[RMDB]
RNA sequence: GGGAACGACUCGAGUAGAGUCGAAAAAGUUUGUAUAAGCACUGUUUAAGCGUCCCAGUGCAUGCCAAUUGGUGUUUACAGACGAGUAUGGUAUUGACCAUAUGAUACUAUUCUCUCUCUCAGGAGAGGAGAAUAGAUAACUACAAAGGAUGUACAAUCCCUAAUGGUAGUUCGCUACCAUUAGGGAAAAAGAAACAACAACAACAAC
Reactivity to 2A3 in 0.01 (KOAc 150mM, MgCl2 10mM, bicine 150mM(pH8.5), 24C), signal-to-noise 2, nucleotides 027 to 156: a000g040u090u000u000g090u060a150u010a110a070g010c000a000c010u050g140u080u140u130a060a060g020c050g020u010c000c020c020a000g010u000g010c000a010u040g040c010c020a260a290u190u250g020g000u050g020u050u050u030a020c020a020g030a010c020g010a020g020u000a000u010g000g020u040a160u230u290g130a080c030c000a000u010a010u010g040a010u020a100c000u010a010u000u000c000u000c000u000c000u000c010u010c070a120g010g200a010g050a010g050g030a040g000a010a000u000a000g000a000u060a030a020c130u100a060c040a060a120a010g010g000a020u040g000u030a010c040a020a060
Reactivity to DMS in 0.01 (KOAc 150mM, MgCl2 10mM, bicine 150mM(pH8.5), 24C), signal-to-noise 2, nucleotides 027 to 156: a130g010u000u020u000g030u010a140u000a080a110g020c000a030c030u000g010u010u010u000a140a080g070c010g030u000c020c090c030a120g050u010g050c050a080u000g020c000c030a080a250u000u020g000g020u010g010u000u010u000a160c010a110g000a060c030g000a280g000u000a010u000g020g000u000a150u010u000g000a110c020c000a010u000a000u000g000a180u000a120c000u010a000u010u010c000u000c000u000c010u000c000u000c190a130g020g000a050g000a030g030g000a030g000a030a030u000a000g000a090u010a060a180c090u000a170c090a030a110a140g000g050a190u000g020u000a070c110a080a300